Source information
Structure probing data (DMS) for a 177-nucleotide construct. Reactivities are given for positions 27 through 126. The RNA was probed in 150 mM KOAc, 10 mM MgCl2 and 150 mM bicine (pH 8.5) at 24 C. The DMS profile rests on 957 reads.
[RMDB]
RNA sequence: GGGAACGACUCGAGUAGAGUCGAAAAGGGGUUAGCGUUUGCAAAACGCUGUUAUUGGAAUGAUCUGGAUUUAGCGCAAGUAGGUCCGAAAUCCAGAUCAACAUUUCGGACCUCCGCGCUAAUAAAAGUACGAUAAUCGCUUCGGCGAUUAUCGUACAAAAGAAACAACAACAACAAC
Reactivity to DMS in 0.01 (KOAc 150mM, MgCl2 10mM, bicine 150mM(pH8.5), 24C), signal-to-noise 1, nucleotides 027 to 126: g020g000g010g010u010u020a020g020c010g020u000u000u020g030c260a090a080a020a030c020g000c010u000g020u000u000a040u020u000g000g010a060a060u030g000a170u000c050u010g000g000a200u000u000u000a010g000c020g020c010a030a100g020u010a020g020g000u000c000c000g010a020a020a010u010c080c170a190g010a110u000c240a030a060c230a020u010u000u000c000g000g000a020c000c000u000c070c160g010c000g010c000u020a010a010u000a020a050a070a100